This 177-nucleotide RNA was probed chemically with DMS. The data come from the RNA Mapping Database (RMDB), library TTRINS. DMS adducts were read by reverse transcription with MarathonRT. Reactivities are given for positions 27 through 126. Conditions: 150 mM KOAc, 10 mM MgCl2 and 150 mM bicine (pH 8.5), 24 C.

RNA sequence: GGGAACGACUCGAGUAGAGUCGAAAAGAUAUGGACUAAUGCUACGUCUCGAAACGACGAUAAGAAGCUAUCGGAAACGAUAGGCUUCUUUUGACGUCGUUUCGAGACGUAGGUUAGUCCUAAGUCACUUUGCCUUUGAGUUCGCUCAAAGGCAAAGAAAAGAAACAACAACAACAAC
Reactivity to DMS in 0.01 (KOAc 150mM, MgCl2 10mM, bicine 150mM(pH8.5), 24C), signal-to-noise 1, nucleotides 027 to 126: g030a000u000a300u010g000g000a010c000u000a010a000u000g000c000u020a000c010g000u010c010u010c000g010a010a030a010c000g000a000c000g020a170u000a020a010g000a060a000g020c000u000a010u000c010g010g000a100a100a300c010g000a070u000a000g030g020c000u000u010c010u010u020u000u020g030a280c100g030u000c000g000u000u010u000c010g000a010g040a000c000g010u000a000g010g000u000u010a000g000u010c010c000u010a010a050g000u000c010a240